[RMDB]
Record summary:
Chemical mapping of a 177-nucleotide RNA with 2A3 and DMS. High DMS reactivity at an A or C suggests that its Watson-Crick edge is free. For 2A3, 8,885 sequencing reads were counted. The RNA was probed in 150 mM KOAc, 10 mM MgCl2 and 150 mM bicine (pH 8.5) at 24 C. The DMS profile rests on 17,532 reads.
RNA sequence: GGGAACGACUCGAGUAGAGUCGAAAAAGCGGCCCUUUCGAGGGCCGCUGAUGGAAAGCCAGCCGAAAGGCAUUUUAUUCCUUGGCUGGCGUAAGCCUAAAAUUCACGCUGCUUUCGAGCAGCGUAACAGCAUGAUAAUAUUCGUAUUAUCAUGCUGAAAAGAAACAACAACAACAAC
Reactivity to 2A3 in 0.01 (KOAc 150mM, MgCl2 10mM, bicine 150mM(pH8.5), 24C), signal-to-noise 4, nucleotides 027 to 126: a000g010c010g010g050c000c000c070u020u030u040c210g070a030g000g020g020c010c000g000c000u000g000a000u020g030g020a100a010a010g000c000c000a000g000c020c030g240a190a030a000g000g010c000a000u010u070u030u090a150u120u050c000c000u000u030g010g000c000u000g000g010c000g010u060a030a000g040c010c000u060a090a100a010a020u130u110c040a000c000g000c000u010g000c000u040u070u120c170g070a010g000c000a000g000c010g000u000a000a020
Reactivity to DMS in 0.01 (KOAc 150mM, MgCl2 10mM, bicine 150mM(pH8.5), 24C), signal-to-noise 8, nucleotides 027 to 126: a020g010c000g020g010c010c000c000u000u000u010c140g010a020g020g010g030c000c000g010c000u000g000a050u000g000g000a100a100a240g000c010c000a010g010c000c010g000a070a040a020g000g010c300a030u000u010u000u010a140u010u000c000c000u000u000g000g010c000u000g000g000c000g010u000a020a100g000c010c010u000a040a050a080a140u010u010c120a040c000g000c000u000g010c000u000u000u010c160g000a020g010c000a000g000c000g000u000a010a090